[RMDB]
RNA sequence: GGGAACGACUCGAGUAGAGUCGAAAAUGUCUCGCUGUGCCUUCGGGUGCCGAGCACUCCCUCCCUCCGCCGGGUCUGAAAGAACGAUUUUCGGCUGGAGAUGACAGCGCGGUUUUUGAGGACGUCUCCGGCCAGGUAAGUUCGCUUACCUGGCCGGAAAAGAAACAACAACAACAAC
Reactivity to 2A3 in 0.01 (KOAc 150mM, MgCl2 10mM, bicine 150mM(pH8.5), 24C), signal-to-noise 1, nucleotides 027 to 126: u250g010u000c000u000c060g100c140u020g000u000g030c000c000u110u080c150g100g000g040u060g000c000c000g040a000g000c000a000c060u060c000c040c000u000c020c000c000u010c020c000g000c030c010g010g000g010u000c000u000g100a170a110a100g110a080a000c130g000a020u000u030u130u140c000g180g010c070u070g000g000a030g020a110u020g000a000c020a040g000c000g010c000g200g000u000u080u000u130u040g000a030g030g000a000c060g120u050c050u000